The record gives the reactivity of an RNA of 207 nucleotides to 2A3 and DMS. The reactions ran in a buffer of 150 mM KOAc, 10 mM MgCl2 and 150 mM bicine (pH 8.5), at 24 C. For 2A3 the reverse transcriptase was SuperScript II with manganese.
RNA sequence: GGGAACGACUCGAGUAGAGUCGAAAAAGAGAUGGUAUAUGGCUUUAUUUCCUCACCUAUAAUGUAAUGUGUCUCUUUAUGCUCAUAAUUCCUGUGCCUGGGUCAUAGUAGGUGCUCAGUAAAUACUUGGUAGGUGGAUACAUUGGCUAAUUAUUAAGCAUCGUAAUAAGUUCGCUUAUUACGAUGCAAAAGAAACAACAACAACAAC
Reactivity to 2A3 in 0.01 (KOAc 150mM, MgCl2 10mM, bicine 150mM(pH8.5), 24C), signal-to-noise 4, nucleotides 027 to 156: a000g050a000g010a030u070g000g060u090a080u020a030u120g050g000c020u090u140u060a050u050u160u050c010c000u060c010a060c010c020u080a040u050a160a120u170g070u100a080a060u090g060u020g020u070c000u030c000u050u050u040a060u090g000c020u020c050a050u050a130a120u120u070c020c000u020g030u040g050c010c030u040g020g000g000u050c010a040u030a090g070u030a020g010g060u040g020c010u000c030a000g000u070a000a050a040u080a070c040u020u070g070g000u060a040g010g030u020g020g000a020u030a100c050a050u040u070g030g000c010u070a080a090u170u150a100u110u070a110a020
Reactivity to DMS in 0.01 (KOAc 150mM, MgCl2 10mM, bicine 150mM(pH8.5), 24C), signal-to-noise 2, nucleotides 027 to 156: a060g020a060g030a060u000g010g030u000a090u000a080u000g020g020c020u000u010u010a070u010u000u000c030c010u000c010a060c070c010u000a070u000a090a090u010g010u010a060a090u000g010u000g030u000c030u000c030u000u000u000a080u030g000c040u010c030a060u000a060a170u010u000c030c050u020g010u000g000c090c000u010g010g000g020u010c040a080u000a170g020u000a060g010g030u000g000c060u000c060a090g030u000a050a060a100u000a040c040u000u000g010g020u000a050g010g040u000g010g010a120u000a040c070a080u010u010g010g010c050u010a080a130u010u010a080u030u000a080a300